[RMDB]
RNA sequence: GGGAACGACUCGAGUAGAGUCGAAAAGAUAUGGACCAGGCAACAGCUUGCGGUCGGAAACGACCGUCAAGACAUGCCUGUCCUAAGUCAAAACUAUUGCAAAACUCUUCGGAGUUUUGCAAUAGAAGAUUAUAAUGUGCUUCGGCACAUUAUAAUCAAAAGAAACAACAACAACAAC
Reactivity to DMS in 0.01 (KOAc 150mM, MgCl2 10mM, bicine 150mM(pH8.5), 24C), signal-to-noise 5, nucleotides 027 to 126: g010a050u000a290u010g010g000a020c240c160a010g010g010c010a030a060c250a180g010c000u010u000g000c000g000g000u000c000g020g000a060a050a140c000g010a010c010c000g010u010c020a000a020g010a080c070a190u000g010c000c000u000g000u010c000c000u010a030a130g000u000c040a090a130a140a170c000u000a000u000u000g010c000a010a000a000a000c000u000c000u000u010c180g010g000a010g010u000u000u000u000g000c000a000a000u000a000g000a070a080
Reactivity to 2A3 in 0.01 (KOAc 150mM, MgCl2 10mM, bicine 150mM(pH8.5), 24C), signal-to-noise 4, nucleotides 027 to 126: g010a020u050a040u140g000g010a020c120c180a030g000g000c010a050a070c030a290g090c010u010u000g000c000g010g020u020c020g010g000a080a080a000c010g000a000c010c010g060u120c030a000a000g020a020c010a040u040g000c000c000u010g000u000c000c000u020a140a030g060u030c020a000a010a110a180c000u000a000u000u000g000c000a000a010a000a020c010u010c010u100u200c300g070g000a000g000u010u000u000u000g010c000a000a000u000a000g000a010a000